[RMDB]
RNA sequence: GGGAACGACUCGAGUAGAGUCGAAAAUGAUGUACAACAAGACAUUGAAGCAGUGGUUAAAGCUGCGAAAGGUCACACAGUAAAAGUGAUUAUUGAGACGGUAUUGUUGGACCAUGACGAAAUUGUACACAUUGCUGCAUUUCGAUGCAGCAAUGUGAAAAGAAACAACAACAACAAC
Reactivity to 2A3 in 0.01 (KOAc 150mM, MgCl2 10mM, bicine 150mM(pH8.5), 24C), signal-to-noise 3, nucleotides 027 to 126: u190g080a080u030g000u020a020c020a040a000c010a070a000g070a020c040a030u000u220g030a150a000g020c000a000g010u040g010g200u260u140a050a180a000g000c020u000g000c000g010a070a000a000g070g030u030c010a010c000a010c030a030g160u280a090a120a110a020g050u050g080a020u030u130a130u170u280g070a180g010a070c100g010g000u020a020u030u040g020u030u020g010g000a000c000c090a010u070g000a000c050g030a060a070a120u130u080g040u010a010
Reactivity to DMS in 0.01 (KOAc 150mM, MgCl2 10mM, bicine 150mM(pH8.5), 24C), signal-to-noise 3, nucleotides 027 to 126: u020g040a110u060g010u000a130c000a020a020c060a030a110g010a070c110a170u030u040g010a260a240g010c030a000g030u010g010g000u090u030a070a120a220g000c000u000g000c000g010a040a100a140g000g010u010c010a030c020a120c100a130g030u000a090a050a040a090g000u000g010a020u000u010a080u020u000g000a230g010a110c090g040g000u010a050u000u000g010u000u000g000g000a010c000c000a070u030g010a040c130g000a020a040a080u040u030g000u010a170